[RMDB]
This 177-nucleotide RNA was probed chemically with DMS and 2A3. The data come from the RNA Mapping Database (RMDB), library OK2TST. The RNA was probed in 150 mM KOAc, 10 mM MgCl2 and 150 mM bicine (pH 8.5) at 24 C. The 2A3 profile rests on 1,774 reads.
RNA sequence: GGGAACGACUCGAGUAGAGUCGAAAAUAGACUUAACCGCUAAUAAAGGUUUAAAAGAUAACAAUACCUUAACUUUUAUUCAAUUAUUAACUCCUUUUGUCGUAUACUUUUUAGCAGAAGAAGUUCAGACUAGGUUAUAGUUCGCUAUAACCUAGUCAAAAGAAACAACAACAACAAC
Reactivity to DMS in 0.01 (KOAc 150mM, MgCl2 10mM, bicine 150mM(pH8.5), 24C), signal-to-noise 3, nucleotides 027 to 126: u000a110g000a040c040u000u000a070a090c080c110g000c100u000a030a010u000a020a040a060g010g010u000u000u000a010a000a030a010g000a180u010a020a050c040a070a210u030a150c170c110u000u020a020a100c000u000u010u000u010a000u020u000c010a030a080u000u000a030u000u000a020a050c010u010c070c110u000u000u000u010g000u000c040g010u010a090u010a100c090u010u000u000u000u000a170g020c120a060g000a020a040g000a040a070g000u000u000c230a090
Reactivity to 2A3 in 0.01 (KOAc 150mM, MgCl2 10mM, bicine 150mM(pH8.5), 24C), signal-to-noise 2, nucleotides 027 to 126: u040a000g000a000c000u060u010a110a000c030c010g000c010u010a010a000u080a010a050a000g040g000u000u020u030a000a030a000a000g040a000u070a100a060c050a140a160u110a240c020c000u080u010a050a070c000u040u040u020u030a030u000u050c010a000a090u210u050a020u030u050a150a010c000u100c000c040u000u080u040u020g040u030c010g030u080a010u060a220c050u270u210u150u050u150a030g020c030a000g030a070a000g030a030a000g030u050u120c060a040